Structure probing data (DMS) for a 177-nucleotide construct. Reactivities are rounded to 0.1 and cut off at 0 and 3. Values cover nucleotides 27 to 126.
RNA sequence: GGGAACGACUCGAGUAGAGUCGAAAAGCGUGGCCUCAGGCCGGGCUGAGCAGGUACAGAGGGGACAGCGCAGCAGCAGCACCAGGACGGGGUGGGUCAGCAGAGAGAGAGCAGAGGUGGCCAGGUGCGAUCUGGAUUGAUUCGUCAAUCCAGAUCGAAAAGAAACAACAACAACAAC
Reactivity to DMS in 0.01 (KOAc 150mM, MgCl2 10mM, bicine 150mM(pH8.5), 24C), signal-to-noise 2, nucleotides 027 to 126: g000c040g000u010g010g010c020c010u030c120a110g030g030c000c030g020g000g020c030u000g010a120g030c040a050g010g030u010a080c160a080g020a120g030g010g000g000a120c100a070g010c100g000c010a050g030c070a070g000c080a080g020c030a130c020c130a130g020g010a150c100g010g000g000g010u010g010g000g010u000c080a070g020c080a080g010a080g010a090g010a090g010a090g020c060a040g010a070g010g020u010g010g000c020c070a030g040g010u010g010
Record summary: The reactions ran in a buffer of 150 mM KOAc, 10 mM MgCl2 and 150 mM bicine (pH 8.5), at 24 C.